[RMDB]
RNA sequence: GGGAACGACUCGAGUAGAGUCGAAAAUCAAGAGACUUAUGGUGGAGCUUCAGUGUGUCUCUAUUGCCGUGCGCAUAUAGAACAUCCUGAUGUCUCUGGUGUUUGUAAAUAUAAGGGUAAGUUUGUCAUGACCAGGCGUUCGCGCCUGGUAAAAGAAACAACAACAACAAC
Reactivity to 2A3 in 0.01 (KOAc 150mM, MgCl2 10mM, bicine 150mM(pH8.5), 24C), signal-to-noise 2, nucleotides 027 to 129: u000c000a010a010g000a010g000a000c030u110u010a190u150g160g080u220g020g000a010g000c000u050u050c010a000g000u000g000u000g000u000c000u000c000u120a000u000u000g000c010c040g300u230g100c180g000c010a000u030a000u000a240g000a000a010c000a000u060c000c020u000g000a000u090g000u100c000u000c000u120g000g000u000g080u010u160u150g030u020a060a150a130u210a120u040a030a020g010g010g040u020a000a080g000u010u150u100g120u050c070a100u000g110
Reactivity to DMS in 0.01 (KOAc 150mM, MgCl2 10mM, bicine 150mM(pH8.5), 24C), signal-to-noise 2, nucleotides 027 to 129: u040c020a170a080g000a010g020a040c080u000u030a050u020g050g030u070g050g000a010g050c080u000u000c020a040g000u010g020u030g010u020c130u020c010u000a020u000u000g020c030c090g090u030g030c170g020c010a030u040a000u000a020g040a050a010c020a030u000c240c020u020g050a040u040g040u030c000u000c040u050g010g000u000g080u120u020u000g010u000a020a160a100u060a100u060a000a000g040g000g000u010a050a070g000u020u000u050g010u050c130a140u060g030